[RMDB]
RNA sequence: GGGAACGACUCGAGUAGAGUCGAAAAGAUAUGGAUAUACUCUAGGGAGAAGGCCAUCGGAAACGAUGGUCAUCUUCGAAGAACUAGAGGUAUAUCCUAAGUCAAAAGCCAUUGUUCGCAAUGGCAACUGCAAAAUUGAGUUCGCUCAAUUUUGCAGAAAAGAAACAACAACAACAAC
Reactivity to DMS in 0.01 (KOAc 150mM, MgCl2 10mM, bicine 150mM(pH8.5), 24C), signal-to-noise 2, nucleotides 027 to 126: g020a040u010a300u000g000g020a010u000a000u000a000c030u000c000u000a020g020g040g000a030g000a010a020g040g000c000c000a020u000c030g010g040a120a180a110c000g000a030u010g020g020u000c000a010u000c000u000u000c030g060a150a060g030a130a300c040u000a000g050a000g010g020u000a010u000a040u000c010c000u000a020a120g010u020c000a080a100a150a240g000c000c000a010u000u000g000u010u020c300g030c000a030a020u000g010g000c000a010a050
Source: RMDB library TTRDES, as collected in RNAgym. The record gives the reactivity of an RNA of 177 nucleotides to DMS. For DMS the reverse transcriptase was MarathonRT. The DMS profile rests on 923 reads. Values cover nucleotides 27 to 126. The reactions ran in a buffer of 150 mM KOAc, 10 mM MgCl2 and 150 mM bicine (pH 8.5), at 24 C.